[RMDB]
RNA sequence: GGGAACGACUCGAGUAGAGUCGAAAAUUCUUUCGGGUCUGUAGUUGCGAGGCGCGCUUGCGCUUCAAGUCCAAGGCAGACGCGGUCGAAAGGAUCCACGUAAACGGCUUCGCUUCGGCGGGGUCGCGAGCACGGCGCGUUCUAGAGGUAAGUCGCAUCGCCCGUUCAUAUUUCCGCAGCAUGGUGCCGCGGCGGGCGAGAGGGUGAUGGUGAGAGCUCAGCCCCGAUGCGCGGGUGUGGGGUCGAAGACUAGGUCAGCCGGAAGAAGCAUGAGCUUCGGCUCAUGCAAAAGAAACAACAACAACAAC
Reactivity to DMS in 0.01 (KOAc 150mM, MgCl2 10mM, bicine 150mM(pH8.5), 24C), signal-to-noise 3, nucleotides 027 to 266: u010u000c000u000u000u010c000g010g010g000u020c000u000g010u000a070g020u010u000g000c140g000a010g010g010c000g020c000g020c300u010u010g010c010g000c000u000u000c010a040a100g000u000c030c020a080a300g020g010c010a040g000a020c010g010c020g020g000u010c010g000a030a010a090g010g000a010u000c020c020a050c080g010u000a020a080a120c000g000g000c000u000u000c010g010c000u010u020c170g030g000c010g000g000g000g000u000c010g000c030g000a060g010c010a090c040g000g000c020g010c010g000u000u000c170u010a060g010a150g010g020u010a020a060g000u010c020g000c010a030u000c000g010c010c000c000g000u040u010c170a100u030a190u020u020u010c030c000g020c000a040g010c000a250u010g020g010u010g020c030c050g030c000g000g000c040g000g000g000c040g000a040g010a040g010g010g020u000g000a140u010g000g020u010g010a270g010a120g000c010u000c030a300g000c010c010c010c020g000a040u000g000c030g020c020g000g000g020u000g000u000g010g000g000g000u000c000g000a270a070g000a040c020u000a010g000g010u010c000a060g010c000c000g000g000a040a040g000a050a060
Reactivity to 2A3 in 0.01 (KOAc 150mM, MgCl2 10mM, bicine 150mM(pH8.5), 24C), signal-to-noise 3, nucleotides 027 to 266: u020u000c010u010u010u010c020g010g000g060u040c000u010g020u010a030g010u020u020g010c000g010a000g010g000c000g000c030g070c230u190u300g010c020g000c020u010u020c000a010a010g010u060c080c020a230a250g050g020c010a000g010a010c020g020c020g090g020u030c020g000a010a050a000g040g000a010u030c010c010a040c010g020u030a020a020a010c020g000g000c000u010u000c000g000c000u030u040c180g120g000c000g000g010g000g010u000c000g000c010g000a010g020c000a000c020g000g010c010g010c010g010u140u110c030u070a060g070a090g300g000u030a010a040g030u030c000g000c010a010u010c000g000c010c010c010g020u120u160c090a070u120a220u300u190u050c020c010g000c000a030g000c010a080u250g280g130u300g150c010c030g000c000g020g000c010g020g000g000c000g000a010g000a000g000g010g020u050g020a020u250g020g030u030g020a060g010a000g030c010u020c020a000g000c000c000c010c020g030a030u030g000c010g000c020g000g020g000u100g040u010g020g020g000g000u010c010g010a020a000g000a000c000u000a010g010g010u040c000a000g000c010c000g000g000a020a010g020a020a000